[RMDB]
RNA sequence: GGGAACGACUCGAGUAGAGUCGAAAAGCGGUACUUGAUACUGUGCAGACCAUCAGUAAGCUACCUCUGGCAGCACCUGAAGGCUACAUCAUCCGUAUUCAGGGUGAGACCAACAGCUCAGCCGAUGCCCACCGGAUGUAUUCGUACAUCCGGUGGGAAAAGAAACAACAACAACAAC
Reactivity to DMS in 0.01 (KOAc 150mM, MgCl2 10mM, bicine 150mM(pH8.5), 24C), signal-to-noise 1, nucleotides 027 to 126: g000c000g000g000u000a010c050u030u000g070a120u010a090c010u000g000u060g010c090a070g000a070c030c030a170u020c030a070g040u010a020a090g000c020u000a000c130c000u000c040u030g080g000c030a090g000c030a100c200c050u000g000a100a060g020g000c020u040a000c030a260u000c050a000u000c000c000g010u000a300u010u030c070a000g000g020g000u040g000a000g000a100c150c040a090a220c170a030g030c300u030c000a000g000c070c000g000a080u010g000
Reactivity to 2A3 in 0.01 (KOAc 150mM, MgCl2 10mM, bicine 150mM(pH8.5), 24C), signal-to-noise 4, nucleotides 027 to 126: g020c050g030g020u060a050c040u170u160g110a110u040a080c020u010g020u040g030c040a050g070a200c030c000a060u000c000a000g040u030a200a020g010c050u060a040c020c010u150c050u110g070g000c030a000g020c000a060c020c010u070g050a060a040g000g000c020u060a020c050a100u060c020a020u010c010c020g050u080a180u130u180c160a090g000g020g020u000g040a020g020a070c020c030a050a060c030a040g020c010u060c040a040g030c010c000g060a030u120g060